An RNA of 177 nucleotides, treated with DMS and 2A3 and read out base by base. The reactions ran in a buffer of 150 mM KOAc, 10 mM MgCl2 and 150 mM bicine (pH 8.5), at 24 C. High 2A3 reactivity points to a flexible backbone, as in loops and unpaired stretches.
RNA sequence: GGGAACGACUCGAGUAGAGUCGAAAAACAGGAAUAUGGCGGCGUCAUCAAGCACGGCGCGAAGCUUCUUUUCGCCUAUUCCCAGGCAACCGUGCCGAUGGUCACGCUCAUCACGCGCAAGGCCUAAAGCUCGAAAAUUAUUCGUAAUUUUCGAGCUAAAAGAAACAACAACAACAAC
Reactivity to DMS in 0.01 (KOAc 150mM, MgCl2 10mM, bicine 150mM(pH8.5), 24C), signal-to-noise 3, nucleotides 027 to 126: a110c090a060g030g020a090a090u000a030u010g000g020c020g000g020c100g040u000c060a050u000c090a120a100g030c100a070c080g010g000c020g030c050g020a090a100g010c200u010u000c120u000u000u010u020c070g010c010c000u000a080u000u000c000c000c020a210g010g000c030a080a080c090c020g010u000g020c000c090g010a090u000g000g000u000c120a070c060g010c050u000c060a080u010c110a040c130g000c050g000c040a080a160g000g010c020c010u010a090a080
Reactivity to 2A3 in 0.01 (KOAc 150mM, MgCl2 10mM, bicine 150mM(pH8.5), 24C), signal-to-noise 2, nucleotides 027 to 126: a000c040a030g050g080a050a040u090a040u240g070g030c070g020g050c000g020u040c000a040u080c050a080a020g030c070a030c060g020g020c040g000c050g060a080a020g020c040u170u050c020u110u160u070u080c020g000c000c000u030a070u020u020c000c010c010a010g000g010c010a010a020c010c030g030u040g020c000c010g030a040u040g010g000u010c020a030c120g000c050u060c010a110u040c010a030c040g060c010g000c010a060a050g080g000c000c040u110a230a130
Source information:
2A3 adducts were read by reverse transcription with SuperScript II with manganese. It was measured as part of the RMDB library OK2TST.